Background
This 177-nucleotide RNA was probed chemically with 2A3 and DMS.
RNA sequence: GGGAACGACUCGAGUAGAGUCGAAAACAACGCGGGACAACUUACCAGGGCCAGUUGUAUGACGAAUCUUUGAUGAGUACGACUAAGUGGUGCAUGGCCGUUCACAACAUGUGAGGUGACUUUUAGGAUGUCACGAUUGAUUCGUCAAUCGUGACAUAAAAGAAACAACAACAACAAC
Reactivity to 2A3 in 0.01 (KOAc 150mM, MgCl2 10mM, bicine 150mM(pH8.5), 24C), signal-to-noise 4, nucleotides 027 to 126: c030a010a000c060g000c020g040g000g020a020c020a020a070c080u060u110a060c040c040a060g000g050g000c010c010a020g020u010u010g050u040a060u090g060a040c040g040a070a080u050c080u070u130u160g130a180u090g010a020g040u050a040c030g050a020c050u070a130a050g030u070g080g020u030g000c070a030u020g050g000c010c010g000u030u020c050a050c020a110a130c040a120u110g040u020g040a080g100g030u030g010a040c010u000u040u000u100a050g070g040
Reactivity to DMS in 0.01 (KOAc 150mM, MgCl2 10mM, bicine 150mM(pH8.5), 24C), signal-to-noise 3, nucleotides 027 to 126: c090a100a080c080g020c080g010g000g000a060c100a040a100c110u000u010a090c080c080a070g000g000g000c040c070a090g000u000u000g000u010a060u040g000a070c150g010a080a050u020c030u010u010u010g010a090u020g000a150g010u000a070c070g000a070c050u020a130a080g000u010g000g000u010g000c100a080u000g000g000c020c030g000u000u000c040a040c070a100a110c220a090u020g010u010g010a060g010g000u010g000a120c030u000u000u000u000a050g000g030